[RMDB]
RNA sequence: GGGAACGACUCGAGUAGAGUCGAAAAGGCAGUAUCGUGAAGCGACCAUUGUUUAACACCUUGUAUUCAAUGGCCAGCCAUGAUGAUGCAGGUAAUACGCUAGUGCAGAUGAAUGCCAGUGGUAGUCACACCGGCAUGAAUUCGUUCAUGCCGGUGUAAAAGAAACAACAACAACAAC
Reactivity to 2A3 in 0.01 (KOAc 150mM, MgCl2 10mM, bicine 150mM(pH8.5), 24C), signal-to-noise 2, nucleotides 027 to 126: g100g000c020a020g000u090a020u030c000g030u060g040a150a000g040c000g010a050c010c010a000u000u010g030u000u060u040a140a020c050a090c060c130u130u240g050u020a040u000u040c010a030a000u000g030g000c010c030a030g010c000c000a000u000g000a000u030g010a000u020g030c060a010g090g030u080a090a060u090a120c010g000c060u040a070g050u070g160c000a000g030a100u130g130a280a030u040g000c010c000a000g020u020g080g030u060a070g040u110c000
Reactivity to DMS in 0.01 (KOAc 150mM, MgCl2 10mM, bicine 150mM(pH8.5), 24C), signal-to-noise 3, nucleotides 027 to 126: g000g020c010a010g000u000a000u000c010g030u000g010a080a150g000c020g010a010c010c000a020u000u000g010u000u000u000a080a070c050a180c300c240u010u010g030u000a030u000u000c030a000a010u000g010g020c000c020a170g000c020c010a000u000g000a020u000g000a060u000g000c010a060g010g000u000a070a120u000a000c060g000c030u000a060g030u010g020c030a040g000a170u010g030a140a070u000g010c020c050a070g010u000g000g010u000a080g010u010c150
Overview: An RNA of 177 nucleotides, treated with 2A3 and DMS and read out base by base. The DMS profile rests on 2,932 reads. The RNA was probed in 150 mM KOAc, 10 mM MgCl2 and 150 mM bicine (pH 8.5) at 24 C.